Source: RMDB library M2PK50, as collected in RNAgym. An RNA of 177 nucleotides, treated with 2A3 and DMS and read out base by base. The reactions ran in a buffer of 150 mM KOAc, 10 mM MgCl2 and 150 mM bicine (pH 8.5), at 24 C. DMS adducts were read by reverse transcription with MarathonRT. For 2A3 the reverse transcriptase was SuperScript II with manganese.
RNA sequence: GGGAACGACUCGAGUAGAGUCGAAAAGGCGAGGUCUUCGGACCUCGCCAAAUGACCGCCAUUAUUGGCUAAGGCUACACGGACGGCCCGGUCAAAUGCCGAAAACUUCCGCCUUCGGGCGGAAGAACUCCCUUAUAGUGUUCGCACUAUAAGGGAGAAAAGAAACAACAACAACAAC
Reactivity to 2A3 in 0.01 (KOAc 150mM, MgCl2 10mM, bicine 150mM(pH8.5), 24C), signal-to-noise 3, nucleotides 027 to 126: g000g010c020g010a010g020g030u070c080u180u250c300g060g010a000c010c010u000c000g000c010c010a000a000a000u000g000a000c000c000g130c030c000a130u180u150a120u270u300g010g030c050u040a170a070g010g000c010u040a030c080a020c120g060g050a020c040g010g000c000c000c000g000g030u050c030a020a020a050u080g000c000c010g010a050a000a010a030c010u000u010c000c010g040c020c050u040u100c240g150g000g010c000g000g000a000a010g000a010a000
Reactivity to DMS in 0.01 (KOAc 150mM, MgCl2 10mM, bicine 150mM(pH8.5), 24C), signal-to-noise 1, nucleotides 027 to 126: g020g010c000g040a000g050g030u010c040u010u000c120g020g000a050c000c000u030c000g000c010c000a000a020a030u010g000a030c040c050g040c000c000a040u000u010a140u030u000g020g020c050u070a130a070g010g010c020u000a120c160a110c040g000g000a060c040g020g000c020c000c000g010g000u000c080a050a050a050u010g000c010c030g010a140a030a200a090c000u000u010c000c010g000c010c000u000u020c160g000g010g010c000g000g000a000a000g030a050a120